[RMDB]
This 177-nucleotide RNA was probed chemically with DMS and 2A3.
Values cover nucleotides 27 to 126.
Source: RMDB library M2PK50, as collected in RNAgym.
RNA sequence: GGGAACGACUCGAGUAGAGUCGAAAAGAGGAGUCAUUCGUGACUCCUCAAAGGGAGCUCAUCUCUCCCGCUCAAGUCCGAGAGCCUUCGGACCCAAAAGAAUGCUGUUCCUGUUCGCAGGAACAAACAUUUGCACCCUGUUCGCAGGGUGCAAAUGAAAAGAAACAACAACAACAAC
Reactivity to DMS in 0.01 (KOAc 150mM, MgCl2 10mM, bicine 150mM(pH8.5), 24C), signal-to-noise 2, nucleotides 027 to 126: g010a010g020g000a010g000u000c000a030u020u010c180g010u000g000a000c000u000c000c010u010c000a000a060a040g000g010g000a010g000c250u030c300a090u020c140u020c000u000c010c010c010g000c080u020c080a080a150g000u000c000c010g010a000g000a100g000c150c090u020u000c040g000g010a060c000c090c090a040a060a130a080g030a030a040u010g050c180u000g020u000u000c000c000u000g000u000u000c160g040c010a000g030g020a010a000c000a030a060a150
Reactivity to 2A3 in 0.01 (KOAc 150mM, MgCl2 10mM, bicine 150mM(pH8.5), 24C), signal-to-noise 1, nucleotides 027 to 126: g020a000g000g000a000g010u000c000a010u100u110c160g150u090g000a010c010u020c000c000u000c000a000a000a000g000g000g000a020g000c040u040c150a170u000c070u010c000u000c000c010c010g000c020u040c030a050a050g000u000c020c000g020a020g010a110g270c050c050u060u000c010g040g000a020c000c030c000a050a150a020a040g120a080a020u110g010c070u070g100u000u000c000c000u000g020u010u030c240g040c040a010g010g010a000a000c020a000a000a000